Structure probing data (DMS and 2A3) for a 207-nucleotide construct.
Conditions: 150 mM KOAc, 10 mM MgCl2 and 150 mM bicine (pH 8.5), 24 C.
Source: RMDB library RNAMAK, as collected in RNAgym.
[RMDB]
RNA sequence: GGGAACGACUCGAGUAGAGUCGAAAACCGUAGGAGCUUUUGACGAAGUAAGAACGUACAACAGCGACUCUUCGAAAGAGGAGUCGACAUGUACAAUUACUUCGAUAAGCUCCUAAACGGAAAGAUAGCACGUAGUCUUCGGACUACGUGCUAUCAACCACAACCUAAGUUUCGACUUAGGUUGUGGAAAAGAAACAACAACAACAAC
Reactivity to DMS in 0.01 (KOAc 150mM, MgCl2 10mM, bicine 150mM(pH8.5), 24C), signal-to-noise 1, nucleotides 027 to 156: c040c010g050u000a040g010g010a040g030c010u000u000u010u030g020a300c220g000a000a020g010u010a030a010g010a190a210c130g020u000a020c010a050a200c160a240g010c010g000a040c000u000c000u000u020c000g000a240a140a300g000a030g040g000a040g010u000c000g000a020c030a190u000g010u000a000c010a160a170u000u000a000c000u000u000c000g000a120u000a000a030g010c000u000c010c000u000a000a030a060c000g040g040a060a050a120g000a020u010a000g000c000a010c010g080u000a010g000u010c010u010u010c300g000g000a030c030u000a000c030g060u010g000c000u010a010u020c000a050a160
Reactivity to 2A3 in 0.01 (KOAc 150mM, MgCl2 10mM, bicine 150mM(pH8.5), 24C), signal-to-noise 1, nucleotides 027 to 156: c000c000g000u000a010g000g010a000g000c010u100u120u210u220g240a150c030g010a010a000g000u000a010a010g040a220a070c150g000u000a000c000a100a040c050a080g030c000g010a000c000u010c010u010u000c010g020a060a050a020g000a000g000g020a000g000u000c000g020a000c010a020u050g000u000a000c000a000a000u010u000a000c000u000u000c000g000a000u000a000a000g000c000u000c010c010u000a000a000a000c000g020g030a100a040a010g010a020u000a000g010c000a000c010g000u000a000g000u010c020u070u150c280g000g000a000c000u000a000c000g000u000g000c000u000a000u020c000a000a020